This 177-nucleotide RNA was probed chemically with 2A3 and DMS. The reactions ran in a buffer of 150 mM KOAc, 10 mM MgCl2 and 150 mM bicine (pH 8.5), at 24 C. For 2A3 the reverse transcriptase was SuperScript II with manganese. It was measured as part of the RMDB library TTRDEL. Values are in units of 0.01, from 0 to 300, in steps of 10. For DMS the reverse transcriptase was MarathonRT.
RNA sequence: GGGAACGACUCGAGUAGAGUCGAAAAGAUAUGGAUCCUGGGCACAAUGAUGCUACCCACCCAUGUCGGAAACGACAUGGAGGUUGAGUGUAGGGAUCCUAAGUCAAAACACUCCUUCGGGAGUGAAUCAUCACAGAUUCUUCGGAAUCUGUGAUGAAAAAGAAACAACAACAACAAC
Reactivity to 2A3 in 0.01 (KOAc 150mM, MgCl2 10mM, bicine 150mM(pH8.5), 24C), signal-to-noise 3, nucleotides 027 to 126: g010a000u030a040u070g000g000a000u010c020c020u140g110g300g030c030a010c020a050a300u300g170a120u220g250c090u200a130c020c010c010a110c000c020c000a020u020g000u000c000g000g010a050a030a030c020g010a000c000a000u000g010g000a010g070g000u110u160g110a080g060u020g000u010a030g020g030g000a000u000c000c000u000a030a000g020u000c000a000a030a090a050c010a000c000u010c020c000u040u120c280g080g020g010a010g000u000g000a010a080
Reactivity to DMS in 0.01 (KOAc 150mM, MgCl2 10mM, bicine 150mM(pH8.5), 24C), signal-to-noise 3, nucleotides 027 to 126: g000a040u010a240u010g000g000a020u000c000c010u020g010g010g030c020a020c020a220a090u010g010a170u020g000c160u000a090c060c020c040a150c120c010c000a000u000g000u000c000g020g000a050a080a080c000g010a020c000a000u000g010g000a020g020g010u000u000g010a140g000u000g000u010a300g000g010g020a020u010c010c000u000a040a060g000u000c010a100a080a150a210c010a010c000u000c000c000u000u020c150g020g000g010a020g030u000g010a040a090